Record summary:
The record gives the reactivity of an RNA of 177 nucleotides to DMS and 2A3. The reactions ran in a buffer of 150 mM KOAc, 10 mM MgCl2 and 150 mM bicine (pH 8.5), at 24 C. It was measured as part of the RMDB library M2PK90.
[RMDB]
RNA sequence: GGGAACGACUCGAGUAGAGUCGAAAAUUAAAGAGCGUAGCACACACUCAGACUAAGUCUGACACACACAUACGCUAAUCAUCUCUGUGUGUGUUCGUGAUAUCGAUAAGUGUAUGAGAUGAAAAAACUUCUAAAUCCACUUCGGUGGAUUUAGAAGAAAAGAAACAACAACAACAAC
Reactivity to DMS in 0.01 (KOAc 150mM, MgCl2 10mM, bicine 150mM(pH8.5), 24C), signal-to-noise 1, nucleotides 027 to 126: u000u020a040a130a120g010a200g000c030g020u000a060g010c140a070c110a030c020a040c140u010c000a010g010a010c060u000a110a150g000u000c030u000g000a050c000a000c000a010c020a050c010a060u010a000c010g000c010u010a060a180u000c000a020u000c000u000c080u010g010u010g010u000g030u000g000u030u000c070g040u000g020a130u010a110u000c010g010a080u020a070a110g000u000g010u000a050u030g000a040g020a050u000g000a000a080a030a060a100a100
Reactivity to 2A3 in 0.01 (KOAc 150mM, MgCl2 10mM, bicine 150mM(pH8.5), 24C), signal-to-noise 1, nucleotides 027 to 126: u190u100a050a050a020g100a010g020c000g000u030a000g000c030a000c000a020c000a010c040u000c010a010g030a060c070u190a230a060g060u000c000u010g000a000c000a000c000a000c000a000c020a040u030a050c000g000c040u040a060a020u010c000a000u020c000u020c010u010g010u000g000u010g020u040g010u050u040c010g040u030g080a060u060a070u300c020g050a030u030a120a070g010u020g000u050a020u040g000a000g000a000u000g040a060a020a020a000a000a020